[RMDB]
RNA sequence: GGGAACGACUCGAGUAGAGUCGAAAAGUAGAAUCUGUCAAGCAAAACCCCAAAACCUUACACUGAGUGCAUUUAGCCUGAUUACUCUUUAAAUCAAAUCAGGCAAUAGAGAGAAACUCGAGAGGUGAAACGGGAGUAAUGUUCGCAUUACUCCCAAUCCCAUAGAAUAGUUCGCUAUUCUAUGGGAAAAAGAAACAACAACAACAAC
Reactivity to 2A3 in 0.01 (KOAc 150mM, MgCl2 10mM, bicine 150mM(pH8.5), 24C), signal-to-noise 2, nucleotides 027 to 156: g070u060a050g060a070a080u070c080u140g080u100c070a120a000g050c000a040a140a180a280c010c020c020c040a030a140a050a050c000c020u020u010a030c040a020c030u080g010a030g040u050g070c060a050u100u120u140a080g030c000c000u010g000a000u010u090a160c080u050c020u210u260u210a110a070a110u180c010a020a020a020u000c000a000g000g000c000a000a000u030a000g030a000g010a000g040a190a050a000c010u020c010g140a220g000a000g040g030u030g040a020a160a000c090g000g000g000a000g010u000a000a000u010g000u030u000c080g000c100a000u010u000a000c000u000c000c000c000a000a000
Reactivity to DMS in 0.01 (KOAc 150mM, MgCl2 10mM, bicine 150mM(pH8.5), 24C), signal-to-noise 2, nucleotides 027 to 156: g010u000a150g010a150a110u000c010u010g000u000c050a100a130g030c040a040a070a100a190c000c000c020c030a050a100a140a080c020c020u000u010a090c070a140c090u010g000a050g040u000g020c060a130u000u000u000a230g000c000c000u000g000a000u000u010a110c100u000c170u000u000u000a110a100a140u000c070a110a040a040u000c010a000g020g010c010a040a050u000a070g000a110g000a200g010a120a050a030c030u000c010g010a120g010a050g000g020u010g000a060a140a090c080g000g010g010a050g040u000a020a020u000g010u000u000c300g020c010a020u000u000a000c000u000c020c000c000a020a020
This 207-nucleotide RNA was probed chemically with 2A3 and DMS.
The data come from the RNA Mapping Database (RMDB), library M2RFPK.
Values cover nucleotides 27 to 156.
For DMS, 4,217 sequencing reads were counted.